[RMDB]
RNA sequence: GGGAACGACUCGAGUAGAGUCGAAAAGAAGGCGUAGGGAAACCAAUAUGGCCGCAGCAUUGCGAGGGCCACCGUGUUCAAGCGCGGGGAGUCAAACGGGCACGACCCGAAACCCGGUGAUCUACGCCCAUAGUUAUGUGUUCGCACAUAACUAUGGAAAAGAAACAACAACAACAAC
Reactivity to 2A3 in 0.01 (KOAc 150mM, MgCl2 10mM, bicine 150mM(pH8.5), 24C), signal-to-noise 9, nucleotides 027 to 126: g130a050a030g030g000c000g000u010a000g020g010g030a070a050a020c010c010a040a050u130a080u150g000g000c000c020g000c010a010g010c060a170u160u300g000c020g020a100g000g030g000c000c000a000c000c000g000u010g020u090u280c190a170a050g060c000g000c000g000g010g010g000a090g020u060c040a050a060a070c020g000g010g000c080a090c300g180a300c030c000c000g020a060a040a030c010c010c010g000g000u010g000a020u000c000u000a000c000g000c000
Reactivity to DMS in 0.01 (KOAc 150mM, MgCl2 10mM, bicine 150mM(pH8.5), 24C), signal-to-noise 9, nucleotides 027 to 126: g000a110a110g010g010c000g030u000a010g000g000g000a160a120a030c010c010a090a100u040a100u010g000g010c010c000g000c040a300g000c070a140u030u020g020c020g000a250g000g000g000c000c000a040c030c000g030u000g010u010u040c300a110a140g010c010g010c000g000g000g000g000a060g000u000c040a090a120a170c010g000g000g020c050a140c300g000a170c000c000c000g000a020a070a070c010c010c040g000g000u010g000a190u040c000u000a000c000g000c000
Source: RMDB libraries RFM100 and RFMREP, as collected in RNAgym. Structure probing data (2A3 and DMS) for a 177-nucleotide construct. For 2A3 the reverse transcriptase was SuperScript II with manganese. The RNA was probed in 150 mM KOAc, 10 mM MgCl2 and 150 mM bicine (pH 8.5) at 24 C.